[RMDB]
RNA sequence: GGGAACGACUCGAGUAGAGUCGAAAACAGUGAGACUGCGGGGGAUAAGCUUCGUAGUCGAGAGGGAAACAGCCCAGAUCGCCGGCUAAGGCCCCUAAGCGUGUACUAAGUGGAAAAGGAUGUGGGGACAAGAGAAGGGCUUCGGCCCUUCUCUUGUAAAAGAAACAACAACAACAAC
Reactivity to DMS in 0.01 (KOAc 150mM, MgCl2 10mM, bicine 150mM(pH8.5), 24C), signal-to-noise 1, nucleotides 027 to 126: c230a200g030u020g060a120g000a060c010u010g010c020g000g000g060g110g030a160u030a150a130g020c000u000u000c020g070u010a000g000u000c000g000a100g000a300g000g020g000a060a080a060c190a120g000c020c000c000a030g000a040u000c080g020c010c040g000g000c030u000a110a180g000g000c000c000c040c110u000a010a020g000c000g060u030g030u000a160c110u000a070a070g000u140g000g000a010a050a030a110g010g000a040u000g000u000g000g010g010g010
This 177-nucleotide RNA was probed chemically with DMS. For DMS the reverse transcriptase was MarathonRT. The RNA was probed in 150 mM KOAc, 10 mM MgCl2 and 150 mM bicine (pH 8.5) at 24 C.